[RMDB]
RNA sequence: GGGAACGACUCGAGUAGAGUCGAAAAGAUAUGGACUAUCCGAAAGAACGUUGAAAUCCACUCGGAAACGAGUGGAUGGAGUUCUUCGGAGUAGUCCUAAGUCAAACAUCCAUGUUCGCAUGGAUGAGUCUUAUCUUUACUUCGGUAAAGAUAAGACAAAAGAAACAACAACAACAAC
Reactivity to 2A3 in 0.01 (KOAc 150mM, MgCl2 10mM, bicine 150mM(pH8.5), 24C), signal-to-noise 5, nucleotides 027 to 126: g020a020u070a050u120g000g000a000c010u020a030u050c010c000g100a160a230a120g010a050a010c050g190u300u070g010a020a020a000u000c000c000a000c000u000c000g030g000a050a090a060c010g000a000g000u010g000g010a000u000g000g010a000g000u010u010c000u000u000c010g000g020a020g020u020a010g000u000c000c000u000a050a000g030u010c050a100a040a090c010a000u010c000c000a010u000g090u020u100c300g000c180a000u000g000g010a010u010g030a020
Reactivity to DMS in 0.01 (KOAc 150mM, MgCl2 10mM, bicine 150mM(pH8.5), 24C), signal-to-noise 7, nucleotides 027 to 126: g000a050u010a300u010g000g010a020c010u000a050u000c000c000g000a040a020a070g010a010a000c010g010u000u020g000a120a140a030u000c000c000a010c000u000c000g000g010a140a100a160c000g010a010g020u000g000g000a000u000g000g000a060g010u000u000c000u000u000c000g000g000a030g010u000a010g010u000c000c000u000a020a080g010u000c040a180a160a300c010a010u000c000c000a000u000g010u000u020c260g020c000a010u000g000g000a000u000g000a110